[RMDB]
RNA sequence: GGGAACGACUCGAGUAGAGUCGAAAAUGUAAGGGUGUGACGAGCCUAGAUAGGUACUUAACCUCUAAUUCGAUAAGCCGUCAGUGUCCGAUAGGGUACUGAUUGUGAUGACGACUAGAAAGUCAGCGAUUACCAACAGCUUCGGCUGUUGGUAAUCAAAAGAAACAACAACAACAAC
Reactivity to 2A3 in 0.01 (KOAc 150mM, MgCl2 10mM, bicine 150mM(pH8.5), 24C), signal-to-noise 1, nucleotides 027 to 126: u270g030u060a090a170g040g030g000u090g000u010g010a000c010g010a010g010c000c000u000a020g050a120u100a020g040g040u040a070c070u150u120a100a030c010c030u050c020u030a080a080u060u000c020g000a010u020a070a000g030c010c000g000u010c000a000g000u000g000u000c000c020g100a200u180a160g000g000g030u000a000c000u000g000a020u020u000g000u040g010a030u090g040a030c010g010a000c000u010a060g010a130a170a010g010u010c010a000g020c040
Reactivity to DMS in 0.01 (KOAc 150mM, MgCl2 10mM, bicine 150mM(pH8.5), 24C), signal-to-noise 1, nucleotides 027 to 126: u000g030u010a060a170g020g020g000u000g000u000g030a030c080g020a220g000c030c000u010a050g020a180u020a010g020g050u000a060c250u000u000a220a100c000c020u000c050u010a000a070u000u000c070g000a060u000a160a250g010c000c090g000u000c000a000g000u000g000u000c000c000g020a160u040a100g030g010g000u020a000c000u000g000a040u020u000g000u000g020a180u000g040a260c060g000a020c170u000a020g010a000a120a060g000u000c010a090g010c250
This 177-nucleotide RNA was probed chemically with 2A3 and DMS. Reactivities are given for positions 27 through 126. 2A3 adducts were read by reverse transcription with SuperScript II with manganese. For DMS, 732 sequencing reads were counted. The RNA was probed in 150 mM KOAc, 10 mM MgCl2 and 150 mM bicine (pH 8.5) at 24 C.